[RMDB]
RNA sequence: GGGAACGACUCGAGUAGAGUCGAAAACGAUCAGAAUGCCGAUCGGGUGCAAGCACCUCUGGAGUCAUCCGGCCCCAAAGGAGGAGAGUCCCGCCAGGGGUGAUCCACCCGGAGAUGAGCGGAGAAAUAGGACAGCGCUUCGGCGCUGUCAAAAGAAACAACAACAACAAC
Reactivity to DMS in 0.01 (KOAc 150mM, MgCl2 10mM, bicine 150mM(pH8.5), 24C), signal-to-noise 4, nucleotides 027 to 129: c130g020a000u020c050a070g030a200a060u040g010c020c020g020a130u010c020g000g030g000u020g080c220a000a160g040c020a030c000c000u010c010u040g000g000a070g020u050c060a080u020c040c000g010g020c070c020c000c140a020a100a220g000g000a300g050g000a090g020a100g060u030c060c030c060g020c090c010a000g000g030g000g000u020g010a000u020c180c030a080c040c000c000g030g020a010g010a060u040g040a190g000c000g000g030a090g000a060a130a050u000a060g000
Reactivity to 2A3 in 0.01 (KOAc 150mM, MgCl2 10mM, bicine 150mM(pH8.5), 24C), signal-to-noise 4, nucleotides 027 to 129: c020g050a050u080c020a020g060a200a030u130g000c000c000g030a040u070c000g000g000g000u000g000c100a290a300g030c000a000c000c000u000c000u000g000g000a010g070u010c000a130u050c020c000g210g040c030c010c010c080a040a100a010g020g010a010g010g020a010g000a000g050u100c040c050c020g000c000c010a020g000g000g000g000u000g000a000u010c000c000a000c000c000c000g000g040a060g030a080u190g060a010g040c020g010g000a060g040a010a090a020u190a070g070
Overview
The data come from the RNA Mapping Database (RMDB), library 15KLIB. An RNA of 170 nucleotides, treated with DMS and 2A3 and read out base by base. DMS adducts were read by reverse transcription with MarathonRT. DMS (dimethyl sulfate) methylates the pairing face of unpaired adenines and cytosines. For 2A3 the reverse transcriptase was SuperScript II with manganese.